[RMDB]
RNA sequence: GGGAACGACUCGAGUAGAGUCGAAAACGUAGAUACUUCGGUAUCUACGAAAAUAACGCUGCCGUGGGACACAGCCGGAGCUAGCCUCGGAUAGUCUCAGUAAAACAGCAUGGUUCGCCAUGCUGAACACGAGUCAAAAGUUCGCUUUUGACUCGUGAAAAGAAACAACAACAACAAC
Reactivity to 2A3 in 0.01 (KOAc 150mM, MgCl2 10mM, bicine 150mM(pH8.5), 24C), signal-to-noise 2, nucleotides 027 to 126: c010g000u000a000g000a000u000a000c000u010u040c250g100g000u000a000u000c000u000a000c000g000a000a000a000a000u040a070a020c030g000c040u050g030c030c040g120u050g010g010g000a020c030a010c040a120g050c010c000g070g030a030g020c060u070a030g010c010c010u030c030g060g020a080u060a100g020u040c000u000c040a090g040u140a000a090a030a040c000a000g030c000a010u000g000g000u030u040c160g010c040c000a000u000g000c000u000g010a010a010
Reactivity to DMS in 0.01 (KOAc 150mM, MgCl2 10mM, bicine 150mM(pH8.5), 24C), signal-to-noise 2, nucleotides 027 to 126: c000g020u020a000g000a010u000a010c000u010u020c180g060g010u000a000u000c010u010a000c000g020a020a040a040a040u000a110a140c140g010c040u010g010c040c090g010u000g010g000g000a090c060a050c090a060g020c050c020g000g010a060g000c030u010a080g010c070c010u000c040g010g000a070u000a050g000u000c000u000c000a080g000u010a020a080a110a140c000a010g020c000a010u000g000g030u010u000c250g020c010c000a010u000g010c020u000g020a030a090
Description:
Structure probing data (2A3 and DMS) for a 177-nucleotide construct. The 2A3 profile rests on 3,087 reads. For DMS, 1,960 sequencing reads were counted. Conditions: 150 mM KOAc, 10 mM MgCl2 and 150 mM bicine (pH 8.5), 24 C. DMS adducts were read by reverse transcription with MarathonRT. It was measured as part of the RMDB library M2PK50.